This 177-nucleotide RNA was probed chemically with DMS. It was measured as part of the RMDB library M2PK50.
[RMDB]
RNA sequence: GGGAACGACUCGAGUAGAGUCGAAAAUCAAUCAUGUUCGCAUGAUUGAAAAGGUCAGGUCACCAAACCACGACACGCGUCGAAGCGACCGAGCCCGGAGGCAAAGUGCAAUCUUCGGAUUGCACAACCCUCUUUUAACGUUCGCGUUAAAAGAGGGAAAAGAAACAACAACAACAAC
Reactivity to DMS in 0.01 (KOAc 150mM, MgCl2 10mM, bicine 150mM(pH8.5), 24C), signal-to-noise 5, nucleotides 027 to 126: u000c000a000a000u000c000a010u000g010u000u020c190g030c010a010u010g010a020u000u000g010a010a050a110a080g000g010u010c040a090g030g000u000c020a100c170c160a060a080a130c050c040a190c030g000a040c050a110c240g010c210g000u000c020g010a150a100g000c100g010a020c000c000g000a120g000c010c000c010g030g010a060g000g010c200a060a060a130g000u000g010c000a010a010u000c000u000u000c170g030g000a010u000u000g010c010a000c000a030a060